[RMDB]
RNA sequence: GGGAACGACUCGAGUAGAGUCGAAAACUCUGUGGUUUUCUCUACUGGAUUAACAAUGAUAGCCAUAGGUGCUUUUUUUGUUGUCCUCACUGGAGUGACAGCCCUGUGUACGGUUACAGUCGACGAGAACUUGCAGAAAACCACGAGGCUAAGACUAACUCCUAAUGACUUUCGAGUCAUUAGGAGUAAAAGAAACAACAACAACAAC
Reactivity to DMS in 0.01 (KOAc 150mM, MgCl2 10mM, bicine 150mM(pH8.5), 24C), signal-to-noise 1, nucleotides 027 to 156: c020u000c050u010g070u020g010g000u030u010u000u000c000u000c030u020a130c090u020g000g000a080u000u010a090a040c010a050a040u000g000a050u000a010g040c000c010a300u010a090g010g030u010g040c020u000u030u000u000u030u000u000g030u000u010g010u000c000c000u010c060a160c130u000g020g010a070g030u010g000a200c150a170g000c000c030c020u000g000u000g040u030a060c060g010g040u010u000a080c040a090g030u010c010g040a080c050g020a210g000a130a070c040u010u000g020c080a090g000a040a020a040a070c020c000a000c010g010a030g020g000c020u000a070a090g000a140c060u000a120
Reactivity to 2A3 in 0.01 (KOAc 150mM, MgCl2 10mM, bicine 150mM(pH8.5), 24C), signal-to-noise 2, nucleotides 027 to 156: c010u060c160u240g010u000g040g000u000u000u000u000c020u000c030u020a090c020u020g020g010a030u250u280a030a010c030a040a080u090g030a060u050a030g000c040c040a090u100a160g120g120u130g020c020u110u000u070u040u000u030u040g030u040u010g010u010c010c020u060c020a080c090u090g060g060a110g020u070g020a030c030a020g030c000c000c030u080g030u020g010u070a060c050g030g000u070u110a050c030a040g040u040c090g110a090c070g010a050g000a140a050c050u090u100g010c070a010g000a000a000a000a000c000c000a000c020g000a010g010g000c020u050a090a000g020a040c000u020a030
Structure probing data (DMS and 2A3) for a 207-nucleotide construct. DMS adducts were read by reverse transcription with MarathonRT. Source: RMDB library OK3TST, as collected in RNAgym. The reactions ran in a buffer of 150 mM KOAc, 10 mM MgCl2 and 150 mM bicine (pH 8.5), at 24 C.